[RMDB]
RNA sequence: GGGAACGACUCGAGUAGAGUCGAAAAAAAUCUGAGUUUGAAAGAUGGCCACCAUAAAUUCUUAAAAGUGGUAUCGCAUUUAGCCCCCCUUCGUACCAAUUCUGUUUUCGUCUCAAGCUCUUCAUUACACUAUUAGACACUUCGGUGUCUAAUAGUGAAAAGAAACAACAACAACAAC
Reactivity to DMS in 0.01 (KOAc 150mM, MgCl2 10mM, bicine 150mM(pH8.5), 24C), signal-to-noise 2, nucleotides 027 to 126: a060a010a110u010c030u000g020a080g020u010u000u000g000a090a100a140g000a040u000g000g000c000c020a030c000c050a080u010a060a070a150u000u000c170u000u010a040a090a080a130g030u000g010g010u010a040u000c050g000c080a090u000u000u000a070g000c010c010c000c000c010c000u020u000c020g020u000a070c060c030a060a110u010u000c120u010g010u010u000u000u010c020g010u000c030u020c010a070a100g000c090u000c070u000u000c030a110u010u000a220